Source information: Conditions: 150 mM KOAc, 10 mM MgCl2 and 150 mM bicine (pH 8.5), 24 C. An RNA of 177 nucleotides, treated with DMS and 2A3 and read out base by base.

RNA sequence: GGGAACGACUCGAGUAGAGUCGAAAAAACACACGCUCUGCUGCAUUGGCUGUCAGUGAUAUCCAAGCCGAGCUUGGCAAGAUUAAGGCUCUCAUGCAACUAUACAAGAAGAAAGGUGAGAAUGCACUGAUCUUAUCUUAUUCGUAAGAUAAGAUCAAAAAGAAACAACAACAACAAC
Reactivity to DMS in 0.01 (KOAc 150mM, MgCl2 10mM, bicine 150mM(pH8.5), 24C), signal-to-noise 9, nucleotides 027 to 126: a070a050c080a090c070a070c100g010c040u000c030u000g010c060u010g010c060a080u010u000g000g010c040u000g010u000c060a090g020u010g010a070u000a060u000c030c030a050a060g020c020c090g000a070g010c030u000u000g010g000c180a060a060g010a080u000u000a090a100g010g000c020u000c030u000c060a050u000g010c050a050a100c070u000a080u010a080c170a070a080g010a070a050g000a050a070a080g010g010u000g010a070g010a060a070u010g010c080a090c190
Reactivity to 2A3 in 0.01 (KOAc 150mM, MgCl2 10mM, bicine 150mM(pH8.5), 24C), signal-to-noise 8, nucleotides 027 to 126: a000a000c080a010c000a010c020g020c010u030c010u040g020c010u020g000c010a120u030u110g060g000c020u020g040u080c020a070g080u010g140a030u030a040u080c020c020a030a000g010c030c060g140a040g020c000u020u030g020g000c040a080a030g020a150u130u140a060a030g040g000c000u000c010u010c020a010u110g060c010a060a010c010u040a020u060a210c060a090a020g110a060a010g060a100a160a010g060g000u020g010a040g030a050a050u120g020c060a040c120